[RMDB]
RNA sequence: GGGAACGACUCGAGUAGAGUCGAAAAUCGCAAACGACGAUAACUACUCUCUAGCAGCUUAGGCUGGCUAGCGCUCCUUCCAUGUAUUCUUGUGGACUGGAUUUUGGAGUGUCACCCUAACACCUGAUCGCGACGGAAACCCUGGCCGGGGUUGAAGCCACGUCAAUACCUUCGGGUAUUGACGUGGAAAAGAAACAACAACAACAAC
Reactivity to 2A3 in 0.01 (KOAc 150mM, MgCl2 10mM, bicine 150mM(pH8.5), 24C), signal-to-noise 3, nucleotides 027 to 156: u060c030g000c050a140a060a090c080g120a020c010g010a040u060a150a070c010u060a020c000u000c010u000c000u030a000g000c020a000g010c020u120u080a120g150g000c020u050g110g030c000u020a000g000c020g030c020u000c000c010u030u000c020c000a070u140g030u070a140u070u130c060u150u220g060u110g020g030a040c050u020g050g020a090u070u080u050u180g010g000a010g010u010g030u040c030a080c000c020c000u020a040a030c010a030c040c010u050g040a080u090c040g000c030g090a000c030g040g030a050a020a020c030c010c000u020g110g000c070c080g060g000g000g000u000u050g010a030a000g030